[RMDB]
RNA sequence: GGGAACGACUCGAGUAGAGUCGAAAAGCAGCUAGCUCUAGGAUCACAUGUGCUAGCUACGGUACUGAUCGCUCAUGCCAUGCAUGUGACUCUAGGUACCAUGGCUAGUGCCAUGGUACUCACUAGGAUUUCGGAUAACCUUCGGGUUAUCCGAAAUAAAAGAAACAACAACAACAAC
Reactivity to DMS in 0.01 (KOAc 150mM, MgCl2 10mM, bicine 150mM(pH8.5), 24C), signal-to-noise 3, nucleotides 027 to 126: g020c050a090g030c020u000a030g010c140u000c040u020a060g020g020a060u000c050a040c020a010u010g000u000g010c200u020a080g000c060u000a080c190g010g020u000a120c230u000g000a080u000c220g000c160u000c040a050u000g010c010c100a060u010g000c010a000u000g010u000g010a010c030u000c030u000a050g000g010u010a000c020c000a010u000g000g000c010u000a170g030u020g000c000c000a000u010g030g020u000a010c000u000c130a130c050u000a020g000g000
Reactivity to 2A3 in 0.01 (KOAc 150mM, MgCl2 10mM, bicine 150mM(pH8.5), 24C), signal-to-noise 2, nucleotides 027 to 126: g090c060a010g050c030u060a020g000c010u000c030u090a050g080g040a110u010c000a030c000a070u060g000u020g030c060u040a060g020c010u030a020c020g010g000u040a060c100u110g110a120u160c060g000c090u040c060a020u070g000c040c020a060u210g020c010a010u040g020u000g000a020c010u020c000u080a040g000g020u010a010c000c000a000u020g000g000c030u110a120g160u120g300c000c020a020u000g000g000u000a000c000u010c030a010c010u010a020g070g020